Chemical mapping of a 207-nucleotide RNA with 2A3. For 2A3 the reverse transcriptase was SuperScript II with manganese. Conditions: 150 mM KOAc, 10 mM MgCl2 and 150 mM bicine (pH 8.5), 24 C. Reactivities are rounded to 0.1 and cut off at 0 and 3. For 2A3, 642 sequencing reads were counted.

RNA sequence: GGGAACGACUCGAGUAGAGUCGAAAAGCCAGUCAGAGGGCGCUACCAUGCAAACUAGGGCUGGCUACUCUUGCACAGAAUCACCUUUCUAUAAAAACCAGUGCAAGAAGGGUUAUUAUACCAUUUAAAAAUCGUGAAUGCUUCGGCAUUCACGAAACACCUUGCAAUCGUUCGCGAUUGCAAGGUGAAAAGAAACAACAACAACAAC
Reactivity to 2A3 in 0.01 (KOAc 150mM, MgCl2 10mM, bicine 150mM(pH8.5), 24C), signal-to-noise 1, nucleotides 027 to 156: g000c000c000a000g010u010c000a010g000a000g060g010g010c030g000c010u050a250c040c110a050u300g000c010a000a010a010c000u020a040g000g000g000c010u000g000g000c000u000a000c000u000c000u020u000g040c000a010c020a050g150a110a070u150c030a190c100c000u050u200u000c100u030a090u120a090a030a020a030a000c030c030a010g000u020g020c000a000a000g000a000a010g040g000g020u010u010a070u130u020a050u170a020c000c040a040u130u180u220a090a170a010a030a060u020c010g000u000g000a000a000u010g000c010u020u010c130g080g000c000a000u000u000c010a000c000g000a000a000a000